[RMDB]
RNA sequence: GGGAACGACUCGAGUAGAGUCGAAAAUCUAAUUAGGACCUACAUGCCUACAUUAACUGGUGGAAGAGCUCUCAGUUGCAUUAAGCUCCCUGGCAGAAAGAAAUGGCCUGGAGGCUGCUUCCUCUCAAGUGAGAAAGGGUCUUCCAGGACUGUUCGAACCUUUUACUCCAUUCGUGGAGUAAAAGGUAAAAGAAACAACAACAACAAC
Reactivity to 2A3 in 0.01 (KOAc 150mM, MgCl2 10mM, bicine 150mM(pH8.5), 24C), signal-to-noise 1, nucleotides 027 to 156: u020c010u070a040a100u120u060a060g070g000a090c010c030u070a070c070a070u190g020c010c020u070a100c070a110u080u150a110a050c040u070g070g000u050g020g050a130a080g010a020g050c000u010c010u010c060a120g060u100u060g010c020a030u060u130a090a040g010c010u060c000c050c000u020g040g000c010a040g130a060a080a000g060a040a090a060u090g020g000c000c020u000g000g000a000g020g020c000u090g060c000u020u010c070c000u010c000u010c020a080a250g130u180g220a010g000a000a070a000g020g040g000u000c030u100u030c010c000a000g030g030a030c000u020g020u030u000c000g030a020
Reactivity to DMS in 0.01 (KOAc 150mM, MgCl2 10mM, bicine 150mM(pH8.5), 24C), signal-to-noise 1, nucleotides 027 to 156: u000c090u000a090a150u000u000a050g000g020a070c020c030u000a100c100a070u010g000c000c010u030a080c140a130u000u010a070a070c070u000g050g040u020g010g020a120a070g000a050g000c070u010c040u010c090a150g020u000u020g000c060a100u000u010a070a160g020c020u010c010c000c050u000g020g040c050a140g000a100a060a070g010a040a040a070u000g000g000c020c030u000g010g020a070g020g000c000u000g030c010u000u010c010c000u000c010u000c040a090a300g010u020g030a020g010a000a000a050g010g010g020u000c010u000u000c020c010a020g050g010a040c060u000g000u000u000c030g020a130

About this RNA
Chemical mapping of a 207-nucleotide RNA with 2A3 and DMS. The RNA was probed in 150 mM KOAc, 10 mM MgCl2 and 150 mM bicine (pH 8.5) at 24 C.